This 177-nucleotide RNA was probed chemically with 2A3 and DMS. Conditions: 150 mM KOAc, 10 mM MgCl2 and 150 mM bicine (pH 8.5), 24 C. Values cover nucleotides 27 to 126.
RNA sequence: GGGAACGACUCGAGUAGAGUCGAAAAGAUGUAAACAUUUCACUCACUGCUUUGCUGAAAGAAGGCUUAGGUGAAACGUUAAUAUGAAAGAAAAGGGCAAAUAGGCUAUAGCAUAGACACGCUGGUGUCACUGCCGUAGUUUCGACUACGGCAGUGAAAAAGAAACAACAACAACAAC
Reactivity to 2A3 in 0.01 (KOAc 150mM, MgCl2 10mM, bicine 150mM(pH8.5), 24C), signal-to-noise 1, nucleotides 027 to 126: g110a030u130g030u120a030a150a000c000a020u000u040u030c010a010c040u000c000a040c070u040g020c000u130u010u040g060c010u130g290a230a170a190g070a110a040g070g000c000u170u170a040g010g000u000g000a050a000a000c020g000u000u020a070a000u070a050u060g060a070a080a040g030a020a100a020a020g040g000g000c030a110a120a020u090a060g030g000c060u120a060u080a170g060c000a000u070a070g000a010c000a000c070g000c080u050g000g020u080g000
Reactivity to DMS in 0.01 (KOAc 150mM, MgCl2 10mM, bicine 150mM(pH8.5), 24C), signal-to-noise 2, nucleotides 027 to 126: g000a060u000g010u000a060a060a050c010a040u000u000u020c000a050c020u010c060a050c250u000g000c030u000u000u020g000c060u000g010a130a110a190g010a020a030g000g000c010u000u020a100g000g020u010g010a010a020a010c040g040u000u000a100a050u000a060u000g010a130a090a120g000a060a060a040a050g000g000g010c110a030a050a060u000a080g010g010c040u010a060u000a090g020c020a100u000a080g010a040c030a020c040g010c080u010g020g000u000g010
The data come from the RNA Mapping Database (RMDB), library OK2TRN.